[RMDB]
RNA sequence: GGGAACGACUCGAGUAGAGUCGAAAAGCUGGCACGUUCGCGUGCCAGCAAAGCACCCUGUCCCGGGUAGGGAACCAAAUAAAAUAAAACUAACAAAAUAAUAAAGUGCACACUUCGGUGUGCACAACUCUAAUUUCUAGUUCGCUAGAAAUUAGAGAAAAGAAACAACAACAACAAC
Reactivity to 2A3 in 0.01 (KOAc 150mM, MgCl2 10mM, bicine 150mM(pH8.5), 24C), signal-to-noise 1, nucleotides 027 to 126: g000c000u000g020g050c060a020c030g000u120u100c300g010c000g000u000g000c000c000a020g040c000a010a000a000g000c000a000c030c000c000u060g030u000c030c010c000g030g080g110u090a110g030g000g020a040a020c070c020a210a070a080u200a220a210a070a000u280a110a190a040a080c010u170a180a100c030a060a300a110a140u280a100a150u100a190a200a000g000u010g000c000a030c000a000c000u060u210c300g080g000u000g000u060g000c000a000c000a000a000